[RMDB]
RNA sequence: GGGAACGACUCGAGUAGAGUCGAAAAGAUAUGGAGAUCUUGGACCUCGACGCACCAUCGAUCUCGGAAACGAGGGAGGUGCGUGAGCUAGAUCUCCUAAGUCAAAAGCCCUUGUUCGCAAGGGCAACUCAUUUAUCAUGUUCGCAUGAUAAAUGAGAAAAGAAACAACAACAACAAC
Reactivity to 2A3 in 0.01 (KOAc 150mM, MgCl2 10mM, bicine 150mM(pH8.5), 24C), signal-to-noise 6, nucleotides 027 to 126: g030a010u070a050u170g010g000a010g000a010u010c030u080u170g110g140a220c050c020u010c050g200a040c000g010c000a000c000c010a110u300c030g040a060u020c010u000c010g010g010a080a100a020c010g000a010g010g010g010a020g000g000u010g000c000g000u000g000a000g020c000u010a000g000a010u000c000u000c000c000u000a040a010g040u010c030a020a030a100a100g000c000c000c000u000u010g050u020u080c280g000c120a000a000g000g000g000c000a000a010
Reactivity to DMS in 0.01 (KOAc 150mM, MgCl2 10mM, bicine 150mM(pH8.5), 24C), signal-to-noise 9, nucleotides 027 to 126: g010a050u000a300u000g000g010a010g010a010u000c000u000u010g020g010a090c300c010u000c010g020a020c010g010c010a010c000c010a290u000c220g000a040u000c000u010c000g000g000a090a090a150c010g010a020g000g000g000a020g010g010u000g000c010g020u000g000a010g000c030u000a010g000a010u000c000u000c000c000u000a010a050g000u000c040a080a080a120a140g000c000c000c000u000u000g010u000u010c180g000c010a000a010g000g000g010c000a010a020

Overview
Chemical mapping of a 177-nucleotide RNA with 2A3 and DMS. The DMS profile rests on 20,353 reads. The RNA was probed in 150 mM KOAc, 10 mM MgCl2 and 150 mM bicine (pH 8.5) at 24 C. For 2A3, 65,659 sequencing reads were counted.